[RMDB]
RNA sequence: GGGAACGACUCGAGUAGAGUCGAAAAAAAAAGGACCUACAGCCGAGCGAGUGACUGAAAACGGCAAAGUCACGAAGCAUCGUUAUACCUAAAUGGUCGUACCGAAAUAAGAGUUGUUCCCAGUAAACCCAUAAAGAUGGUUCGCCAUCUUUAUGGGAAAAGAAACAACAACAACAAC
Reactivity to 2A3 in 0.01 (KOAc 150mM, MgCl2 10mM, bicine 150mM(pH8.5), 24C), signal-to-noise 2, nucleotides 027 to 126: a050a000a000a000a000g090g000a020c000c010u010a010c030a020g080c070c020g060a000g030c000g010a020g020u010g000a040c010u060g100a050a060a100a100c070g170g000c170a160a040a000g030u030c000a000c040g020a060a000g000c010a080u040c000g010u000u090a040u030a070c030c020u060a150a130a140u200g020g010u040c040g000u030a050c000c020g050a020a140a110u150a130a020g010a000g000u010u020g020u000u020c000c000c000a000g000u010a020a000a000
Reactivity to DMS in 0.01 (KOAc 150mM, MgCl2 10mM, bicine 150mM(pH8.5), 24C), signal-to-noise 2, nucleotides 027 to 126: a000a010a070a090a070g000g000a020c040c010u030a020c040a160g000c180c040g040a070g000c010g020a190g000u000g010a010c000u000g000a060a020a120a030c080g010g020c070a060a100a020g010u000c010a010c010g000a090a100g000c030a090u010c000g000u000u010a040u000a040c010c000u000a010a060a050u010g000g000u010c020g030u000a020c020c000g000a100a120a030u000a040a220g000a020g000u000u010g010u000u000c000c000c000a130g000u010a070a080a120